[RMDB]
RNA sequence: GGGAACGACUCGAGUAGAGUCGAAAACAACAGGGAGGUUGGUGGUGGACGAGCCACUCGCCAACCGGGUCAGGUCCGGAAGGAAGCAGCCCUAAGGAGCCAGGCACGGGUCGCCGUGCCAGUACAAGUAGAGAGUAGCAUUCGUGCUACUCUCUACAAAAGAAACAACAACAACAAC
Reactivity to 2A3 in 0.01 (KOAc 150mM, MgCl2 10mM, bicine 150mM(pH8.5), 24C), signal-to-noise 2, nucleotides 027 to 126: c020a020a000c020a040g040g050g000a060g040g010u030u040g000g000u020g000g040u020g010g030a070c060g010a040g160c000c010a010c020u080c010g010c000c010a000a010c010c060g000g000g010u030c010a020g000g050u040c010c010g010g110a060a050g020g010a020a000g000c020a010g030c010c010c000u060a060a070g110g020a020g090c050c070a060g040g000c010a000c000g040g000g130u210c070g050c120c000g000u000g000c000c000a010g000u080a010c040a150a120
Reactivity to DMS in 0.01 (KOAc 150mM, MgCl2 10mM, bicine 150mM(pH8.5), 24C), signal-to-noise 3, nucleotides 027 to 126: c020a080a120c140a100g010g000g010a070g020g000u000u010g000g020u010g030g010u000g010g000a200c280g020a160g010c000c000a020c010u000c020g030c000c000a010a030c010c020g010g010g000u000c010a300g010g000u010c010c000g020g020a110a120g000g000a010a010g000c020a170g010c000c010c020u010a120a140g010g010a110g000c050c050a070g010g000c010a010c000g020g000g000u010c300g020c010c010g020u000g010c000c000a050g000u010a060c190a060a120
The record gives the reactivity of an RNA of 177 nucleotides to 2A3 and DMS. For DMS the reverse transcriptase was MarathonRT. The 2A3 profile rests on 3,019 reads.